An RNA of 177 nucleotides, treated with 2A3 and read out base by base.
Source: RMDB library OK1LIB, as collected in RNAgym.
The reactions ran in a buffer of 150 mM KOAc, 10 mM MgCl2 and 150 mM bicine (pH 8.5), at 24 C.
For 2A3, 285 sequencing reads were counted.
RNA sequence: GGGAACGACUCGAGUAGAGUCGAAAAGACAUUAAUCCUUUCAAAUUCGCAACGCCAAAUGGUUACAAAAGUCUUCAUGAACUUUCCUAACUAUUGAUCGUCGUGAAGACAGAGCGACGAAGAGAAGGGGUCCGAUGCCAUUCGUGGCAUCGGACCCAAAAGAAACAACAACAACAAC
Reactivity to 2A3 in 0.01 (KOAc 150mM, MgCl2 10mM, bicine 150mM(pH8.5), 24C), signal-to-noise 1, nucleotides 027 to 126: g030a010c000a000u170u300a060a140u140c000c000u000u000u000c300a300a300a120u000u000c000g000c000a010a000c010g000c090c000a220a000a000u180g140g070u270u080a130c050a040a250a040a000g000u000c000u000u000c000a090u050g080a140a030c000u010u000u000c000c080u070a050a050c020u160a180u240u110g000a000u000c070g000u000c000g000u000g000a000a050g000a000c040a000g000a050g000c000g300a300c010g000a000a000g000a000g000a120a000g000

Values cover nucleotides 27 to 126.